[RMDB]
RNA sequence: GGGAACGACUCGAGUAGAGUCGAAAAGAUUCCUUGACUCACUUUGUGUGCGCGUUGAUUGCGCACGGCCACCUUCCGCUCAGACCGGCGCGGAGGUGUAGCGAUAGGACAGCAGCGUUUUCACCAGUAUACUAUGCCACUUCGGUGGCAUAGUAUAAAAAGAAACAACAACAACAAC
Reactivity to DMS in 0.01 (KOAc 150mM, MgCl2 10mM, bicine 150mM(pH8.5), 24C), signal-to-noise 4, nucleotides 027 to 126: g010a270u020u000c020c030u020u010g030a100c060u030c030a090c080u010u000u000g010u020g020u000g000c000g020c010g020u020u000g000a160u030u020g020c000g040c000a020c010g010g000c100c000a020c020c000u000u000c010c010g020c010u020c060a090g020a070c200c150g000g000c180g000c110g000g000a000g010g000u000g010u010a050g010c010g010a100u020a080g010g000a110c070a040g010c070a040g010c090g010u010u000u010u000c040a090c080c110a130g000
Reactivity to 2A3 in 0.01 (KOAc 150mM, MgCl2 10mM, bicine 150mM(pH8.5), 24C), signal-to-noise 5, nucleotides 027 to 126: g060a120u040u070c030c000u030u060g060a040c010u050c050a080c050u090u160u110g140u070g000u000g020c000g000c030g050u050u200g270a200u120u210g000c000g000c010a010c000g000g000c000c010a000c000c000u100u110c000c000g020c010u050c040a050g060a280c030c080g010g000c020g000c060g010g000a010g000g000u000g000u010a010g000c010g060a040u060a080g020g030a020c050a070g030c020a000g020c050g030u030u000u040u060c070a110c010c010a010g060

Notes
The record gives the reactivity of an RNA of 177 nucleotides to DMS and 2A3. The reactions ran in a buffer of 150 mM KOAc, 10 mM MgCl2 and 150 mM bicine (pH 8.5), at 24 C.